[RMDB]
RNA sequence: GGGAACGACUCGAGUAGAGUCGAAAACUGCACGUCCUCCACCAGGUGAACAGUUUAAGCACCUCGUGCCUCUUAUGCAUAAGGGGGCUGCGUGGCCUAUUGUUAGACGACGUAUAGUGCAAAUGUUAAGGCCGCGCCUUCGGGCGCGGCAAAAGAAACAACAACAACAAC
Reactivity to 2A3 in 0.01 (KOAc 150mM, MgCl2 10mM, bicine 150mM(pH8.5), 24C), signal-to-noise 1, nucleotides 027 to 129: c010u000g000c000a000c000g050u000c000c000u130c000c000a030c000c000a010g000g070u000g020a010a030c030a080g020u070u160u000a060a010g020c000a000c000c000u010c000g000u000g000c000c000u010c000u000u110a110u240g120c080a080u100a010a000g020g000g030g000g000c030u050g010c000g000u000g000g000c000c000u030a080u000u130g200u000u080a050g000a020c000g010a000c020g090u070a110u030a090g020u060g080c000a000a000a000u080g020u030u000a060a010g000

An RNA of 170 nucleotides, treated with 2A3 and read out base by base.
Values cover nucleotides 27 to 129.
Source: RMDB library 15KLIB, as collected in RNAgym.
2A3 adducts were read by reverse transcription with SuperScript II with manganese.
Conditions: 150 mM KOAc, 10 mM MgCl2 and 150 mM bicine (pH 8.5), 24 C.